[RMDB]
RNA sequence: GGGAACGACUCGAGUAGAGUCGAAAAAACCCCCAGCUAGGCUGGGGGUUCCGGAAAGCUUUCAGCUUUAAGCCAGUUAUUAAAACCCCUUUUGAUUUGUUAAAACAUCUUGCGGUCUGGCAACUGCUGAGAUCUAAGGAUUCGUCCUUAGAUCUCAAAAAGAAACAACAACAACAAC
Reactivity to DMS in 0.01 (KOAc 150mM, MgCl2 10mM, bicine 150mM(pH8.5), 24C), signal-to-noise 1, nucleotides 027 to 126: a000a030c020c000c000c000c010a010g080c010u000a040g010g100c000u000g020g000g020g000g000u000u000c020c010g010g010a130a040a060g010c040u000u030u010c120a050g010c000u000u020u010a090a110g000c000c010a040g010u000u000a180u010u030a060a050a050a160c010c010c010c050u030u000u020u000g000a040u020u010u030g000u030u020a050a010a080a110c070a010u000c020u010u020g000c190g000g020u030c010u010g000g010c000a110a110c090u000g000c070
Reactivity to 2A3 in 0.01 (KOAc 150mM, MgCl2 10mM, bicine 150mM(pH8.5), 24C), signal-to-noise 4, nucleotides 027 to 126: a000a010c020c030c000c000c000a020g020c070u300a090g240g060c010u010g000g000g000g000g000u000u010c000c000g010g100a100a040a000g000c030u080u190u160c060a000g010c000u030u070u100a080a000g000c000c000a020g040u110u100a100u120u090a120a080a050a080c010c000c010c010u040u070u010u070g110a130u060u040u080g110u070u160a050a120a020a010c020a030u020c020u030u030g010c030g010g040u030c020u020g020g000c030a020a040c040u050g000c010